[RMDB]
RNA sequence: GGGAACGACUCGAGUAGAGUCGAAAAUAAUUGGAUUUCAGCAAAUAUUCGUGAAGAUUUCUGCAGAAAUUGAAGUAAAUAGCAGUUUAUGAAUUAAACGACAUUCAUGAUGUUUAAAUCACUGGCCUCUAUAAUGACCGUUCGCGGUCAUUAUAGAAAAAGAAACAACAACAACAAC
Reactivity to DMS in 0.01 (KOAc 150mM, MgCl2 10mM, bicine 150mM(pH8.5), 24C), signal-to-noise 4, nucleotides 027 to 126: u030a050a110u010u040g000g000a030u000u010u010c030a070g030c040a020a050a050u020a040u010u010c020g020u030g010a110a150g000a040u000u000u010c060u000g010c040a110g010a030a030a020u000u000g010a060a070g000u010a040a060a080u020a040g000c040a030g000u010u010u010a040u020g000a010a030u020u000a030a020a070c090g000a090c130a050u010u010c120a040u010g000a060u000g000u000u010u000a020a010a040u000c050a080c090u010g020g020c090c030
Reactivity to 2A3 in 0.01 (KOAc 150mM, MgCl2 10mM, bicine 150mM(pH8.5), 24C), signal-to-noise 6, nucleotides 027 to 126: u160a010a090u090u130g070g010a030u010u010u030c040a010g000c020a000a090a070u130a090u090u080c020g020u040g090a110a050g040a100u030u040u070c010u030g010c000a050g120a090a110a080u120u150g060a130a020g070u160a050a060a100u110a060g020c020a020g030u070u120u080a060u070g090a040a050u070u080a120a060a020c060g070a030c030a040u010u040c020a020u090g050a010u020g010u000u020u050a020a030a030u050c030a020c180u010g060g000c020c010

Conditions: 150 mM KOAc, 10 mM MgCl2 and 150 mM bicine (pH 8.5), 24 C. An RNA of 177 nucleotides, treated with DMS and 2A3 and read out base by base. Reactivities are given for positions 27 through 126. The data come from the RNA Mapping Database (RMDB), libraries RFM100 and RFMREP. For DMS the reverse transcriptase was MarathonRT.